[RMDB]
RNA sequence: GGGAACGACUCGAGUAGAGUCGAAAACCACAGACGGGAGCCUCCAGGAGGGUUUGAGGAGAACUCACCUCCAGAGGACCCCUUCAGCGAACAGAGGAGUCUCUACCUCGGAGGAGAAAGACCGUAGACACCCCGAGUUUCGACUCGGGGAAAAGAAACAACAACAACAAC
Reactivity to DMS in 0.01 (KOAc 150mM, MgCl2 10mM, bicine 150mM(pH8.5), 24C), signal-to-noise 4, nucleotides 027 to 129: c000c000a080c150a070g040a140c140g000g030g040a110g010c020c010u040c000c150a210g000g030a030g120g010g000u020u020u080g030a000g000g010a240g040a090a170c060u020c000a090c040c010u010c060c010a150g010a020g020g000a070c110c000c010c000u000u000c030a100g010c060g000a060a000c100a080g020a000g000g010a070g030u000c040u010c030u070a190c070c010u000c070g010g020a150g010g020a250g040a060a110a080g010a090c040c000g080u040a080g020a040c200a030
Reactivity to 2A3 in 0.01 (KOAc 150mM, MgCl2 10mM, bicine 150mM(pH8.5), 24C), signal-to-noise 4, nucleotides 027 to 129: c010c000a010c020a020g090a000c050g000g000g020a070g060c010c000u030c040c010a150g010g000a020g020g060g030u060u130u300g030a000g000g000a140g120a140a060c010u000c010a040c000c000u000c010c000a010g000a000g000g000a020c000c020c000c000u040u050c010a050g010c020g060a040a010c010a020g030a020g040g030a010g120u000c020u000c010u130a110c040c010u040c020g010g010a030g020g030a060g060a020a070a020g040a020c030c010g020u050a020g020a030c050a080
An RNA of 170 nucleotides, treated with DMS and 2A3 and read out base by base. Reactivities are given for positions 27 through 129. The DMS profile rests on 6,287 reads.